Source: RMDB library OK2TST, as collected in RNAgym. An RNA of 177 nucleotides, treated with DMS and 2A3 and read out base by base. The 2A3 profile rests on 976 reads. The reactions ran in a buffer of 150 mM KOAc, 10 mM MgCl2 and 150 mM bicine (pH 8.5), at 24 C.

RNA sequence: GGGAACGACUCGAGUAGAGUCGAAAAUAUCAAUAGACCAUAUCACUGAUAAUAAGGAGAUAAAAGAUGCAAUUUCUCAAUUCAAACAGAUAACAGAGUUUGAAUUGAAAAAACUCUGUGAUGAUGACUGGUACUACCUAUUCGUAGGUAGUACCAGAAAAGAAACAACAACAACAAC
Reactivity to DMS in 0.01 (KOAc 150mM, MgCl2 10mM, bicine 150mM(pH8.5), 24C), signal-to-noise 2, nucleotides 027 to 126: u020a050u010c000a090a180u010a160g010a120c040c000a110u000a110u010c000a010c040u000g010a080u000a080a070u000a080a190g020g010a130g010a060u000a030a050a040a070g010a050u010g020c060a030a090u010u040u000c130u000c000a040a010u000u000c000a010a010a030c030a010g020a020u000a090a130c280a180g000a050g000u010u000u000g000a040a050u010u010g000a000a000a050a070a030a060c060u000c030u010g010u030g010a030u010g000a050u010g000a200
Reactivity to 2A3 in 0.01 (KOAc 150mM, MgCl2 10mM, bicine 150mM(pH8.5), 24C), signal-to-noise 1, nucleotides 027 to 126: u090a000u020c000a010a050u050a150g120a100c040c010a010u020a000u030c000a000c070u030g050a060u010a300a040u130a070a070g080g010a050g000a040u060a070a130a010a020g100a030u100g130c040a100a120u000u130u000c050u010c010a030a000u010u010c020a050a050a000c000a010g070a070u140a080a050c030a080g150a070g080u010u030u030g040a070a040u070u000g000a050a020a000a000a000a000c020u000c010u030g020u020g020a030u030g020a010u060g040a020